[RMDB]
RNA sequence: GGGAACGACUCGAGUAGAGUCGAAAAGUUGCCCGAGAAGAGAUCACACAGAUGAGACACAAGGAGCGAUGUCUCAACACUUGGUUUUCGACAAGUGACGAGUCGUUCCCAAAAUCGCUCCAAUGAACAAAAAUUGGUGAUUCGUCACCAAUUUUUGAAAAGAAACAACAACAACAAC
Reactivity to DMS in 0.01 (KOAc 150mM, MgCl2 10mM, bicine 150mM(pH8.5), 24C), signal-to-noise 2, nucleotides 027 to 126: g050u010u030g020c230c020c020g000a100g000a110a150g000a120g000a080u010c070a140c140a140c090a160g020a140u000g000a020g000a020c020a010c100a110a100g030g000a020g030c000g020a100u000g000u000c000u000c000a030a110c080a080c010u000u000g020g010u000u000u000u000c040g000a050c010a050a080g010u020g030a160c010g000a020g020u010c010g000u000u010c000c000c000a010a000a020a090u000c000g010c000u000c010c010a070a030u000g000a070a210